Conditions: 150 mM KOAc, 10 mM MgCl2 and 150 mM bicine (pH 8.5), 24 C. An RNA of 177 nucleotides, treated with DMS and 2A3 and read out base by base. For DMS, 42,369 sequencing reads were counted. Values cover nucleotides 27 to 126.
RNA sequence: GGGAACGACUCGAGUAGAGUCGAAAAGAUAUGGAUGUAUACCUGCUUGGACCCUACUGCAUCGGAAACGAUGUUAGGCUAGCAGAUACAUCCUAAGUCAAAAGCGCUUAAUCUUCGGAUUAAGCGCGAUAUAAUGUUUGUUCGCAAACAUUAUAUCAAAAGAAACAACAACAACAAC
Reactivity to DMS in 0.01 (KOAc 150mM, MgCl2 10mM, bicine 150mM(pH8.5), 24C), signal-to-noise 9, nucleotides 027 to 126: g000a010u000a020u010g000g000a020u000g000u000a010u000a110c300c030u000g000c000u000u010g010g010a020c300c000c000u000a010c300u010g000c010a010u000c000g010g010a010a010a020c000g020a010u000g000u000u000a000g000g000c010u000a000g030c000a020g000a040u000a000c000a000u000c000c000u000a000a080g000u000c000a110a100a070a230g010c000g000c000u000u000a000a000u000c000u000u010c260g030g000a020u000u000a000a000g010c000g010c000
Reactivity to 2A3 in 0.01 (KOAc 150mM, MgCl2 10mM, bicine 150mM(pH8.5), 24C), signal-to-noise 4, nucleotides 027 to 126: g000a000u020a010u070g000g000a000u000g040u020a020u040a170c070c050u020g020c010u130u300g040g010a020c010c010c000u010a030c100u040g020c000a000u000c000g000g000a010a000a000c000g000a000u000g010u020u010a000g000g000c020u020a010g000c000a000g000a030u000a000c000a000u000c000c000u000a000a000g010u000c000a010a040a150a130g000c000g000c000u010u010a000a000u000c020u060u120c300g160g000a000u000u010a000a000g000c000g000c010
The data come from the RNA Mapping Database (RMDB), library TTRDES.
For 2A3 the reverse transcriptase was SuperScript II with manganese.